[RMDB]
RNA sequence: GGGAACGACUCGAGUAGAGUCGAAAAACGGAUGGCGUACGCGCCAUCCGAAGGACCAGCCUAAGUAGUAGUGCCGCAGGUAACAUGACUUGGGAUUACCUGCUCCCUGCUGCUUAACUUGGUACAAUAGAAUAAAAUACUUCGGUAUUUUAUUCUAAAAAGAAACAACAACAACAAC
Reactivity to 2A3 in 0.01 (KOAc 150mM, MgCl2 10mM, bicine 150mM(pH8.5), 24C), signal-to-noise 8, nucleotides 027 to 126: a010c010g000g000a000u000g010g020c020g030u070a030c250g030c000g000c110c000a000u010c000c000g010a000a010g070g040a020c000c000a010g010c010c030u010a010a000g000u020a010g000u000a000g000u020g070c100c030g020c020a000g010g010u010a010a010c020a100u240g140a170c110u200u190g120g030g080a110u060u010a000c000c000u000g000c000u010c010c000c000u000g000c000u000g000c000u000u000a000a020c020u020u110g010g010u040a030c010a030a140
Reactivity to DMS in 0.01 (KOAc 150mM, MgCl2 10mM, bicine 150mM(pH8.5), 24C), signal-to-noise 5, nucleotides 027 to 126: a110c010g010g010a010u000g000g000c000g060u030a080c250g030c000g010c000c000a010u020c000c000g000a040a050g010g010a070c000c000a020g000c210c070u000a010a010g010u000a010g010u000a000g010u010g030c120c130g010c000a010g000g010u000a010a000c080a130u020g020a140c220u060u040g020g010g010a250u000u000a000c000c000u000g000c000u020c200c070c000u000g000c000u000g000c010u000u000a010a040c080u010u010g000g000u010a050c110a100a130

The record gives the reactivity of an RNA of 177 nucleotides to 2A3 and DMS. DMS adducts were read by reverse transcription with MarathonRT.